RNA sequence: GGGAACGACUCGAGUAGAGUCGAAAAUGCCAGCCGCCUCUGUCCACCACACGCUGGCAGAGGGCCGGCCAGGUGCUGUGGGAUGCAGCUGGAGGCCUUGAAGGCCGGUGGGAUCGUCCCAGUGCGUGAGGAGAGGCUCCUGCUCCCUCAGGUGGGAGUAGGGAAAAUAGUUCGCUAUUUUCCCUACAAAAGAAACAACAACAACAAC
Reactivity to DMS in 0.01 (KOAc 150mM, MgCl2 10mM, bicine 150mM(pH8.5), 24C), signal-to-noise 1, nucleotides 027 to 156: u010g010c000c000a090g020c000c060g000c000c000u000c010u010g020u010c010c010a090c040c110a130c120a250c100g040c050u000g010g000c010a060g010a030g050g020g000c020c040g040g050c020c000a050g010g010u000g040c060u000g000u000g020g020g020a170u000g010c030a120g000c000u010g030g000a110g010g030c000c000u020u010g010a240a110g030g030c000c000g010g030u000g020g050g020a300u020c110g030u000c000c000c000a090g000u010g060c070g030u000g000a120g010g060a300g010a080g010g010c030u000c010c020u020g010c030u000c000c000c020u000c000a150g000g000u010g000g010g020a300
Reactivity to 2A3 in 0.01 (KOAc 150mM, MgCl2 10mM, bicine 150mM(pH8.5), 24C), signal-to-noise 3, nucleotides 027 to 156: u120g010c010c000a000g020c020c000g050c000c000u020c010u030g150u160c020c010a070c020c020a150c060a020c160g100c120u020g000g010c000a000g020a000g030g040g000c120c010g030g060c000c010a050g000g030u020g020c000u010g010u030g000g010g020a030u140g030c000a040g010c020u040g110g100a080g050g100c000c000u020u040g070a080a040g110g000c020c020g000g020u020g000g020g000a150u270c100g120u070c070c000c000a040g250u030g050c080g030u040g020a140g030g020a030g010a000g030g000c000u000c000c000u010g020c000u000c010c000c000u000c020a030g050g040u110g030g070g020a070
About this RNA
The data come from the RNA Mapping Database (RMDB), library OK3TST. The record gives the reactivity of an RNA of 207 nucleotides to DMS and 2A3. The 2A3 profile rests on 1,978 reads. Reactivities are given for positions 27 through 156. 2A3 adducts were read by reverse transcription with SuperScript II with manganese. The RNA was probed in 150 mM KOAc, 10 mM MgCl2 and 150 mM bicine (pH 8.5) at 24 C. High 2A3 reactivity points to a flexible backbone, as in loops and unpaired stretches. Reactivities are rounded to 0.1 and cut off at 0 and 3.